[RMDB]
RNA sequence: GGGAACGACUCGAGUAGAGUCGAAAAGCAUGGUGGCACACCUGUAGUCCCAGUUACUUGGGAAGCUGAAAGAGGAGAAUCACUUGAACCCAGGAGGCGGAAGUUGCAGUGAGCCGAGACUGCACCACUAAAGACUAUUGUUCGCAAUAGUCUUUAGAAAAGAAACAACAACAACAAC
Reactivity to DMS in 0.01 (KOAc 150mM, MgCl2 10mM, bicine 150mM(pH8.5), 24C), signal-to-noise 9, nucleotides 027 to 126: g010c070a040u000g010g020u010g010g020c130a100c060a070c040c020u000g020u000a080g010u000c010c010c010a070g010u010u010a080c140u010u000g000g000g010a070a080g000c070u000g000a040a070a110g010a100g010g000a090g010a100a090u000c050a040c060u000u010g010a070a110c040c030c020a080g010g010a090g010g010c060g000g000a050a070g010u000u000g010c030a020g010u000g010a130g020c020c030g000a100g000a060c040u000g000c040a080c110c100a190
Reactivity to 2A3 in 0.01 (KOAc 150mM, MgCl2 10mM, bicine 150mM(pH8.5), 24C), signal-to-noise 4, nucleotides 027 to 126: g030c040a040u150g020g020u050g080g030c030a030c020a020c100c020u030g040u080a060g050u040c000c010c000a020g050u070u150a080c060u060u010g010g020g010a060a020g030c040u050g070a090a080a060g090a060g040g060a040g030a060a070u050c020a030c060u010u060g040a050a040c030c010c020a010g030g020a020g000g040c060g030g020a050a050g070u110u070g000c000a010g010u010g040a010g040c020c010g020a010g010a010c020u020g000c020a030c010c020a050